[RMDB]
An RNA of 177 nucleotides, treated with DMS and 2A3 and read out base by base. Values are in units of 0.01, from 0 to 300, in steps of 10. 2A3 adducts were read by reverse transcription with SuperScript II with manganese. For DMS, 1,570 sequencing reads were counted. Source: RMDB library OK2TST, as collected in RNAgym.
RNA sequence: GGGAACGACUCGAGUAGAGUCGAAAACGUCUGCUCUCUUGACGAGGGGCUCUAUGGUCUCCCUGGAUACUGUUGCCACGUGGGCUUCUAUCCUAACGUCGGGGUUGAGCUUUGAUAGUCUCUCGGCCAUGAUUGGCGUGUUCGCACGCCAAUCAUGAAAAGAAACAACAACAACAAC
Reactivity to DMS in 0.01 (KOAc 150mM, MgCl2 10mM, bicine 150mM(pH8.5), 24C), signal-to-noise 1, nucleotides 027 to 126: c120g000u000c060u010g010c040u000c050u010c050u000u000g010a050c030g000a120g000g010g000g010c040u000c090u010a040u040g010g010u000c020u010c000c070c090u000g000g010a020u010a040c230u000g050u010u000g010c000c030a130c280g000u000g020g000g020c030u000u000c050u000a060u000c010c000u010a100a140c150g000u000c120g010g010g000g020u000u010g010a030g020c030u000u030u020g000a090u000a070g000u000c030u000c010u000c030g010g000c100
Reactivity to 2A3 in 0.01 (KOAc 150mM, MgCl2 10mM, bicine 150mM(pH8.5), 24C), signal-to-noise 1, nucleotides 027 to 126: c040g100u000c050u050g030c020u000c010u000c000u020u120g050a010c000g010a030g040g000g000g000c010u030c060u130a190u160g030g080u000c030u040c100c040c000u030g000g010a020u050a070c030u120g020u050u010g000c000c020a190c300g110u180g140g040g000c000u010u010c010u020a040u030c000c000u030a180a050c030g060u050c080g050g020g010g010u140u100g030a000g000c010u090u040u020g050a040u070a030g010u000c000u010c010u010c000g020g050c030